[RMDB]
RNA sequence: GGGAACGACUCGAGUAGAGUCGAAAAUUGAAUUCUCACAACAAACCCAUGAGGUAAACAGCAUUUGUUUAUAUGGUAUUCUGCCACUUACAAUUUUAUACUAUUUAGGGUUCUAAAGGGAUCUUUAAAUUUGAGAAUUAAUAAAACACAUCAUAUGCUAACAUUAGACUUUCGAGUCUAAUGUUAGAAAAGAAACAACAACAACAAC
Reactivity to 2A3 in 0.01 (KOAc 150mM, MgCl2 10mM, bicine 150mM(pH8.5), 24C), signal-to-noise 4, nucleotides 027 to 156: u050u060g020a030a090u050u010c000u010c020a060c040a060a070c040a060a180a100c030c010c040a110u130g030a080g100g030u050a030a070a010c020a020g100c090a120u080u090u120g010u050u080u030a120u020a050u100g030g000u040a150u130u060c100u170g020c030c020a070c030u080u090a030c030a060a090u010u120u180u120a120u140a130c050u050a090u110u090u050a020g010g000g030u060u010c010u120a150a110a100g080g010g040a010u030c000u010u250u060a080a170a200u190u140u030g020a020g030a010a060u100u070a060a080u190a080a120a040a010c050a030c020a040u150c050a030u140a080u290g070
Reactivity to DMS in 0.01 (KOAc 150mM, MgCl2 10mM, bicine 150mM(pH8.5), 24C), signal-to-noise 1, nucleotides 027 to 156: u010u000g000a200a070u000u010c000u020c000a070c090a110a120c120a110a110a100c050c000c000a270u030g000a080g020g010u000a050a080a130c080a040g040c080a080u010u010u010g010u000u000u000a030u010a030u050g000g030u000a120u000u010c230u020g020c040c010a060c080u010u000a080c050a050a080u010u000u020u000a090u010a090c000u010a040u000u000u010a090g040g010g060u000u000c070u020a060a070a100g000g020g000a070u000c010u000u010u010a060a060a130u000u040u000g000a060g010a040a020u000u000a030a080u000a100a040a080a080c010a050c060a090u000c080a060u000a160u000g020
Source: RMDB library OK3TST, as collected in RNAgym. An RNA of 207 nucleotides, treated with 2A3 and DMS and read out base by base. Reactivities are rounded to 0.1 and cut off at 0 and 3. The DMS profile rests on 1,196 reads. The reactions ran in a buffer of 150 mM KOAc, 10 mM MgCl2 and 150 mM bicine (pH 8.5), at 24 C. For 2A3 the reverse transcriptase was SuperScript II with manganese. For 2A3, 1,798 sequencing reads were counted.